The record gives the reactivity of an RNA of 177 nucleotides to DMS and 2A3.
Source: RMDB library OK2TST, as collected in RNAgym.
Values cover nucleotides 27 to 126.
Conditions: 150 mM KOAc, 10 mM MgCl2 and 150 mM bicine (pH 8.5), 24 C.

RNA sequence: GGGAACGACUCGAGUAGAGUCGAAAACUCUAUGAAGAGAUCAAAGAGAAAGCGUUGAGCUGGAGUCUGGGCCGCGCGGAACCCCACGAAAUCGACGAGCUGAACAUUCUUCAUGCGACCAUGCUGGGAUUAUCUGUCAGUUCGCUGACAGAUAAUCAAAAGAAACAACAACAACAAC
Reactivity to DMS in 0.01 (KOAc 150mM, MgCl2 10mM, bicine 150mM(pH8.5), 24C), signal-to-noise 3, nucleotides 027 to 126: c010u000c010u010a050u010g000a170a150g010a050g010a080u000c030a080a110a100g000a150g000a130a120a100g010c040g030u010u000g010a140g020c030u010g010g010a110g000u000c060u000g020g000g000c030c090g000c050g010c080g020g010a040a080c050c020c020c040a100c120g000a060a060a090u010c070g010a070c060g000a080g010c020u000g000a080a080c060a080u000u000c020u010u000c050a050u000g000c070g020a100c140c070a040u010g010c070u000g010g000
Reactivity to 2A3 in 0.01 (KOAc 150mM, MgCl2 10mM, bicine 150mM(pH8.5), 24C), signal-to-noise 2, nucleotides 027 to 126: c000u000c000u010a060u060g070a120a140g040a010g060a230u060c070a090a160a040g090a030g030a080a090a020g030c040g010u060u120g030a020g000c030u030g060g010a050g040u020c060u070g000g040g000c030c000g000c000g010c000g020g000a080a090c010c010c060c020a050c050g100a110a050a040u070c050g020a050c010g010a030g010c020u020g010a040a000c000a050u050u050c000u060u050c020a030u090g010c030g040a050c020c010a030u100g000c020u070g030g100